RNA sequence: GGGAACGACUCGAGUAGAGUCGAAAAGGCGUCUUCGCUGCCUCGGCCGCCAUGCACUGACCGGUAGCCGCCGUAAUCGCGGCAUUGUUCCCAUAAACGGAUGUGGGUGUGGGUGACGAAGUAGCAGGCUACCCUGCCUAUUCGUAGGCAGGGUAGCAAAAGAAACAACAACAACAAC
Reactivity to DMS in 0.01 (KOAc 150mM, MgCl2 10mM, bicine 150mM(pH8.5), 24C), signal-to-noise 2, nucleotides 027 to 126: g000g000c090g000u000c060u000u010c150g030c030u010g040c000c030u000c030g000g010c030c010g050c040c010a080u010g000c060a020c100u000g010a130c040c030g010g020u000a050g030c010c030g030c050c080g010u010a110a060u000c300g010c020g000g000c000a140u000u000g000u000u000c000c000c000a170u000a080a120a100c030g000g000a130u000g010u010g020g000g010u000g040u000g000g000g010u000g000a140c050g030a050a020g000u000a070g030c010a110g020
Reactivity to 2A3 in 0.01 (KOAc 150mM, MgCl2 10mM, bicine 150mM(pH8.5), 24C), signal-to-noise 1, nucleotides 027 to 126: g050g030c050g060u010c010u090u080c080g010c000u000g000c000c000u000c020g070g000c050c020g000c030c000a150u110g010c010a020c020u070g130a050c020c000g000g050u020a020g000c000c000g020c000c040g080u110a050a080u200c140g000c010g000g000c060a010u060u300g000u030u000c020c000c000a060u160a010a210a000c030g010g030a050u140g040u120g180g020g100u060g000u030g050g020g030u010g010a000c000g000a000a010g020u010a000g030c050a010g080

The record gives the reactivity of an RNA of 177 nucleotides to DMS and 2A3. For 2A3 the reverse transcriptase was SuperScript II with manganese. The RNA was probed in 150 mM KOAc, 10 mM MgCl2 and 150 mM bicine (pH 8.5) at 24 C. For 2A3, 1,321 sequencing reads were counted.